[RMDB]
RNA sequence: GGGAACGACUCGAGUAGAGUCGAAAAUUCAUCCUCAAGUUUCUUGAUCUUCUUGUUGAUUCGCCGGAGCUCCUUCUCGGCUAUUCGCUUUUUCUUCCUUUCCUCUACCCACUGCUCGAGGGCCUCCAUAGUUGCGAGUUCGCUCGCAACAAAAGAAACAACAACAACAAC
Reactivity to DMS in 0.01 (KOAc 150mM, MgCl2 10mM, bicine 150mM(pH8.5), 24C), signal-to-noise 2, nucleotides 027 to 129: u010u060c110a080u020c020c000u000c190a110a150g020u000u090u030c040u040u000g010a110u020c050u070u000c030u030u040g000u000u000g030a000u000u000c060g030c050c030g020g010a000g020c100u000c000c030u020u050c050u020c070g030g040c070u030a070u020u020c070g090c060u030u000u000u000u010c040u040u030c060c020u000u000u060c000c020u050c050u010a090c010c010c010a000c050u010g030c050u010c060g010a050g000g060g060c000c000u040c040c020a030u050a120
Reactivity to 2A3 in 0.01 (KOAc 150mM, MgCl2 10mM, bicine 150mM(pH8.5), 24C), signal-to-noise 3, nucleotides 027 to 129: u050u020c020a050u060c000c010u100c020a080a090g000u020u030u000c000u030u060g050a080u010c020u050u000c020u040u090g070u030u050g060a130u060u040c040g010c020c000g020g000a010g020c000u040c040c000u040u030c070u020c010g020g000c030u030a040u020u020c020g010c000u030u080u030u060u000c000u030u040c000c000u030u020u000c000c000u000c000u010a060c020c010c020a040c000u040g010c020u020c040g010a040g030g030g000c000c000u000c000c010a080u100a090

Source: RMDB library 15KLIB, as collected in RNAgym. This 170-nucleotide RNA was probed chemically with DMS and 2A3. For DMS, 11,111 sequencing reads were counted. 2A3 adducts were read by reverse transcription with SuperScript II with manganese. DMS adducts were read by reverse transcription with MarathonRT. The reactions ran in a buffer of 150 mM KOAc, 10 mM MgCl2 and 150 mM bicine (pH 8.5), at 24 C.